[RMDB]
RNA sequence: GGGAACGACUCGAGUAGAGUCGAAAAUCUUCUGUCCCUGGGUCAUGCAAGGCAGAAAUGAAGAGUUAGCGCAUGACAGCUAGCAGUAUUUAUAAGGGAACAGGGUGUGAUCACUUUAAGUUCACAGAUAUAACGGGCAUUUCGAUGCCCGUUAUAUAAAAGAAACAACAACAACAAC
Reactivity to DMS in 0.01 (KOAc 150mM, MgCl2 10mM, bicine 150mM(pH8.5), 24C), signal-to-noise 2, nucleotides 027 to 126: u010c040u000u020c030u000g010u000c000c000c020u000g020g010g020u010c040a030u000g000c050a170a150g010g000c010a080g000a080a100a110u000g010a100a080g010a170g010u000u010a080g020c110g000c060a030u010g000a050c020a130g010c060u000a030g020c100a140g010u000a040u000u000u000a070u010a110a100g020g020g020a050a040c040a040g000g000g000u000g000u000g000a020u020c060a080c130u020u000u000a070a110g010u010u000c000a040c030a050g000
Reactivity to 2A3 in 0.01 (KOAc 150mM, MgCl2 10mM, bicine 150mM(pH8.5), 24C), signal-to-noise 1, nucleotides 027 to 126: u010c010u080u000c000u000g020u150c000c040c050u050g030g110g000u010c000a000u000g010c010a000a100g210g000c000a010g210a150a110a010u190g060a080a230g140a020g060u190u170a030g000c000g000c040a030u010g040a080c050a020g000c020u070a000g090c050a020g030u120a020u130u190u020a140u050a070a060g050g010g030a010a020c050a000g180g020g070u060g060u020g000a070u100c050a050c090u090u240u130a110a000g010u010u010c000a030c000a000g130